The record gives the reactivity of an RNA of 177 nucleotides to DMS and 2A3. The data come from the RNA Mapping Database (RMDB), library TTRDEL. High 2A3 reactivity points to a flexible backbone, as in loops and unpaired stretches.

RNA sequence: GGGAACGACUCGAGUAGAGUCGAAAAGAUAUGGACGACUAUGUGGGAGCCUAGUCGGAAACGACAGGCGACGAUCACACGUCGUCCUAAGUCAAAACCUUUCUGCUACUUCGGUAGCAGAAAGGAAGGUACCCUUUACGUUCGCGUAAAGGGUACCAAAAGAAACAACAACAACAAC
Reactivity to DMS in 0.01 (KOAc 150mM, MgCl2 10mM, bicine 150mM(pH8.5), 24C), signal-to-noise 2, nucleotides 027 to 126: g000a020u000a100u000g000g010a030c000g010a020c000u000a300u000g020u000g040g040g010a260g000c000c000u010a070g060u000c000g010g000a010a020a070c020g030a010c000a040g000g000c000g000a030c040g000a090u000c010a000c000a040c300g010u000c000g050u000c000c000u000a000a060g000u000c000a110a060a080a140c010c010u000u000u010c000u000g010c000u000a000c000u000u010c220g010g000u010a000g000c000a010g000a000a000a000g050g020a000a000
Reactivity to 2A3 in 0.01 (KOAc 150mM, MgCl2 10mM, bicine 150mM(pH8.5), 24C), signal-to-noise 1, nucleotides 027 to 126: g010a020u010a020u090g000g000a000c010g000a000c010u050a060u260g020u050g070g070g020a010g020c020c010u030a140g010u010c000g020g030a020a010a000c000g010a000c010a030g000g000c010g020a030c010g000a090u140c020a010c000a000c010g000u000c000g000u010c000c000u010a010a010g000u000c020a020a040a080a230c000c000u020u000u000c000u000g000c010u010a000c000u040u110c300g150g010u010a000g000c000a000g000a000a000a010g020g010a000a000
The RNA was probed in 150 mM KOAc, 10 mM MgCl2 and 150 mM bicine (pH 8.5) at 24 C. Values cover nucleotides 27 to 126.